Description:
The data come from the RNA Mapping Database (RMDB), library OK1LIB. This 177-nucleotide RNA was probed chemically with DMS and 2A3. The RNA was probed in 150 mM KOAc, 10 mM MgCl2 and 150 mM bicine (pH 8.5) at 24 C. DMS adducts were read by reverse transcription with MarathonRT. The 2A3 profile rests on 10,101 reads. For DMS, 17,132 sequencing reads were counted.
RNA sequence: GGGAACGACUCGAGUAGAGUCGAAAAAGCUUAGGCUAUGGACUCUCGAGUGUAAUCACUGAAAAAGAGAGGAAAAGUGUGGAAAACAGUUGAGAGACUGUCACGCUCUCAACAUAGCGAUAUGCGAGGGUUAUCUAUAGUUCGCUAUAGAUAACCCAAAAGAAACAACAACAACAAC
Reactivity to DMS in 0.01 (KOAc 150mM, MgCl2 10mM, bicine 150mM(pH8.5), 24C), signal-to-noise 7, nucleotides 027 to 126: a100g000c000u000u020a100g010g000c000u000a030u010g000g010a240c010u010c000u000c000g000a030g020u010g010u030a130a150u040c020a030c010u010g000a050a070a090a120a100g000a040g020a020g010g010a070a070a140a030g000u000g000u010g010g010a080a080a210a060c050a030g000u000u000g000a180g010a180g010a010c020u010g000u010c060a030c040g000c000u000c040u010c090a080a090c010a010u010a010g010c010g010a110u010a040u000g010c020g020a160
Reactivity to 2A3 in 0.01 (KOAc 150mM, MgCl2 10mM, bicine 150mM(pH8.5), 24C), signal-to-noise 7, nucleotides 027 to 126: a000g040c050u100u050a090g070g000c000u010a010u040g030g000a030c000u000c000u000c010g030a020g000u020g000u070a070a080u260c030a020c030u050g110a100a030a000a080a030g040a010g000a020g030g040a060a070a000a020g040u040g010u040g080g050a110a130a040a060c030a020g000u010u030g040a050g000a010g020a070c010u020g030u100c000a010c010g000c010u010c010u010c020a000a090c000a030u010a000g010c020g080a090u030a020u210g030c040g030a150